[RMDB]
RNA sequence: GGGAACGACUCGAGUAGAGUCGAAAACAUUGAAACACCUUGUGGUCCUGUUGCUUUCGCACUAAGUAGUCCUCUUACGUUCUCGAUGACCACGUAGCGCGGUCGCAGGAUGUCGAUAGCUUCUGCGAAGUAGGACCAGAGACCGGAGCGUGUGCCGUAGAUGGUAGUCAUUCGUGACUACCAUCUAAAAAGAAACAACAACAACAAC
Reactivity to 2A3 in 0.01 (KOAc 150mM, MgCl2 10mM, bicine 150mM(pH8.5), 24C), signal-to-noise 5, nucleotides 027 to 156: c050a040u090u200g150a120a070a030c060a050c040c040u100u090g200u160g130g020u030c000c020u090g060u170u120g060c030u140u200u100c030g000c010a020c070u060a080a010g020u060a010g040u110c030c010u030c050u100u150a050c030g010u060u000c050u040c020g230a270u090g010a000c000c010a020c050g040u100a060g050c050g010c030g050g010u020c010g010c020a000g000g050a020u110g110u150c050g110a070u110a120g020c000u040u040c010u020g000c020g000a030a010g050u120a030g010g050a010c010c000a000g000a000g000a030c030c050g020g020a020g040c130g010u000g040u080g070c010c030g020
Reactivity to DMS in 0.01 (KOAc 150mM, MgCl2 10mM, bicine 150mM(pH8.5), 24C), signal-to-noise 2, nucleotides 027 to 156: c060a110u010u010g020a200a120a060c020a040c030c020u000u000g020u000g020g000u000c010c010u000g010u010u010g020c040u000u000u010c020g040c020a050c040u000a040a060g020u000a080g010u000c020c050u000c010u000u000a210c050g010u000u020c020u000c040g010a100u000g010a050c010c010a050c000g000u010a010g000c020g040c010g000g010u000c000g030c010a010g050g010a040u010g020u000c030g070a230u000a180g010c020u000u000c020u000g000c020g020a030a120g000u000a060g010g010a040c040c030a120g000a110g020a070c050c030g000g020a140g020c110g020u000g010u000g040c020c060g020

An RNA of 207 nucleotides, treated with 2A3 and DMS and read out base by base. For 2A3 the reverse transcriptase was SuperScript II with manganese. The DMS profile rests on 4,768 reads. Source: RMDB library OK3TST, as collected in RNAgym. High 2A3 reactivity points to a flexible backbone, as in loops and unpaired stretches.